[RMDB]
RNA sequence: GGGAACGACUCGAGUAGAGUCGAAAAAAAAAGGCACUUCAGGUGGCUCUGGGGCGAAAGUACUGACGACAGACCAGAAGCGGGAAGCCGUUGAGUUUAUGUGUGAUGCGACGGGUCUGUCGAAAAACAAACUUCACUAGUUCGCUAGUGAAGUUUGAAAAGAAACAACAACAACAAC
Reactivity to DMS in 0.01 (KOAc 150mM, MgCl2 10mM, bicine 150mM(pH8.5), 24C), signal-to-noise 3, nucleotides 027 to 126: a040a080a050a130a070g000g000c030a020c030u010u000c100a070g020g000u000g000g010c040u000c050u000g000g010g010g020c170g010a050a040a050g000u010a130c080u010g000a190c020g010a030c020a010g010a010c000c000a080g020a090a210g000c020g010g000g030a090a160g000c020c000g020u000u000g010a100g010u000u010u000a030u010g020u010g020u020g010a120u000g010c010g000a180c050g010g010g000u000c010u000g010u000c010g000a010a030a030a070a050
Reactivity to 2A3 in 0.01 (KOAc 150mM, MgCl2 10mM, bicine 150mM(pH8.5), 24C), signal-to-noise 2, nucleotides 027 to 126: a000a000a000a000a000g050g000c030a020c030u040u040c060a020g030g000u070g020g030c010u000c050u070g010g020g020g030c040g030a050a020a000g020u020a030c080u080g020a010c020g000a000c010a010g000a010c000c010a030g020a070a000g030c010g030g040g040a050a000g080c010c010g010u030u080g080a170g070u120u190u060a120u100g160u020g030u030g070a090u120g010c010g010a000c020g030g030g000u010c000u030g000u000c000g000a030a000a000a030a000